RNA sequence: GGGAACGACUCGAGUAGAGUCGAAAAGAUAUGGAUAUUUCAACAGCGUGAGGUUCGGAAACGAACCCACGACAUGAAAUCAUCCUAAGUCAAAAUCGAAUAGACGUGUUCGCACGUCUAUUCGAAACAAUCCCUAGACCUUCGGGUCUAGGGAUUGAAAAGAAACAACAACAACAAC
Reactivity to 2A3 in 0.01 (KOAc 150mM, MgCl2 10mM, bicine 150mM(pH8.5), 24C), signal-to-noise 1, nucleotides 027 to 126: g010a000u040a020u080g010g000a010u000a010u020u000u000c120a160a130c120a170g150c010g000u000g040a300g070g000u030u000c010g010g000a030a070a000c010g000a010a010c000c000c000a000c020g070a000c020a020u040g000a020a010a000u080c120a030u000c010c000u020a060a010g050u040c040a000a010a010a300u050c000g000a020a010u000a010g000a000c020g010u020g020u010u120c300g030c140a000c030g000u040c010u020a000u000u010c000g000a000a000a000
Reactivity to DMS in 0.01 (KOAc 150mM, MgCl2 10mM, bicine 150mM(pH8.5), 24C), signal-to-noise 2, nucleotides 027 to 126: g000a000u010a190u000g000g000a000u000a000u000u000u000c000a020a300c250a140g000c000g050u000g020a110g000g000u000u010c000g020g000a030a030a100c010g000a010a010c010c000c000a000c010g000a060c150a140u000g000a000a020a020u000c120a000u000c000c000u000a050a070g010u000c050a090a060a070a140u000c000g000a010a000u000a020g010a000c000g000u000g000u000u020c180g050c000a010c010g030u000c000u010a000u000u000c000g050a020a070a110